[RMDB]
RNA sequence: GGGAACGACUCGAGUAGAGUCGAAAAAGCGAAAAGAGAGAGCUCUAUUGGAAACCAAAUCAAAAAUAACACAUCCUGUGUAUAGCCUUUACUUUCCUGAGGUGAGUUAUAUACAGGCUACUGUGUUCCUUAUUCCAUUCACUUUCUCCUCAGGGAAUACUGCAUUUAGGUUCGCCUAAAUGCAGUAAAAAGAAACAACAACAACAAC
Reactivity to 2A3 in 0.01 (KOAc 150mM, MgCl2 10mM, bicine 150mM(pH8.5), 24C), signal-to-noise 4, nucleotides 027 to 156: a010g070c020g050a020a040a080a040g030a010g010a000g000a020g040c030u040c080u210a130u080u150g020g030a050a040a090c090c070a110a100a070u120c070a140a180a130a070a070u200a130a000c000a020c000a040u300c030c000u000g000u010g000u010a000u000a000g000c000c000u090u110u150a110c040u050u070u170c010c020u030g020a000g000g040u070g030a090g010u020u000a010u000a000u000a010c000a000g000g020c010u150a060c060u010g010u010g020u070u060c010c010u180u170a130u080u050c020c020a030u040u100c050a040c070u110u110u020c020u010c000c010u020c010a030g010g040g030a010a050
Reactivity to DMS in 0.01 (KOAc 150mM, MgCl2 10mM, bicine 150mM(pH8.5), 24C), signal-to-noise 1, nucleotides 027 to 156: a000g060c010g020a080a090a090a070g020a100g020a020g020a030g030c060u000c030u000a130u000u010g020g000a080a060a300c080c080a030a110a100u020c030a010a130a140a090a110u010a080a060c010a030c050a060u020c000c000u010g000u000g010u030a030u020a020g000c000c030u000u000u000a040c040u000u000u000c110c140u020g000a040g030g070u020g010a030g010u000u000a020u010a020u000a030c000a070g010g050c300u010a030c150u030g010u000g000u010u000c100c030u010u010a130u000u010c020c000a150u000u010c060a010c080u000u000u010c010u000c010c000u000c040a090g010g010g000a040a130
This 207-nucleotide RNA was probed chemically with 2A3 and DMS. Conditions: 150 mM KOAc, 10 mM MgCl2 and 150 mM bicine (pH 8.5), 24 C. 2A3 is a SHAPE reagent: it acylates the 2'-hydroxyl of flexible nucleotides of all four kinds. Reactivities are given for positions 27 through 156. The 2A3 profile rests on 2,001 reads. It was measured as part of the RMDB library OK3TST.